[RMDB]
RNA sequence: GGGAACGACUCGAGUAGAGUCGAAAAUCUUCCAGACGCUUCGCCAACACCGCCAGAUCUUCUUUCGGAUCAUCGCCCAUGAUGACGAUGACUGCUUUCUGCCCGGUGGCAUCGGACCAGACAUGCAGGGUCUAUAUUGAUUCGUCAAUAUAGACCCAAAAGAAACAACAACAACAAC
Reactivity to 2A3 in 0.01 (KOAc 150mM, MgCl2 10mM, bicine 150mM(pH8.5), 24C), signal-to-noise 3, nucleotides 027 to 126: u020c010u050u040c020c010a040g010a090c060g030c060u060u040c020g020c040c010a060a020c040a040c060c010g040c020c010a040g010a130u020c040u120u040c010u040u210u090c040g090g010a100u020c020a020u040c010g040c030c040c010a120u180g030a100u100g030a050c020g000a010u040g040a070c020u020g030c020u050u080u010c010u040g030c000c010c000g030g030u020g030g000c000a010u040c020g000g020a030c030c000a010g110a090c020a050u170g010c040a060
Reactivity to DMS in 0.01 (KOAc 150mM, MgCl2 10mM, bicine 150mM(pH8.5), 24C), signal-to-noise 5, nucleotides 027 to 126: u010c090u000u000c020c030a120g010a120c090g010c060u000u000c040g000c040c010a080a130c080a070c060c030g020c130c030a060g000a070u010c080u000u000c070u000u000u010c050g010g020a130u000c030a020u000c010g010c040c020c070a150u010g000a100u000g030a030c030g000a080u000g010a050c070u010g000c130u000u000u000c020u000g000c100c040c010g000g010u000g010g000c060a050u000c060g000g010a090c100c030a050g010a070c110a050u000g010c120a130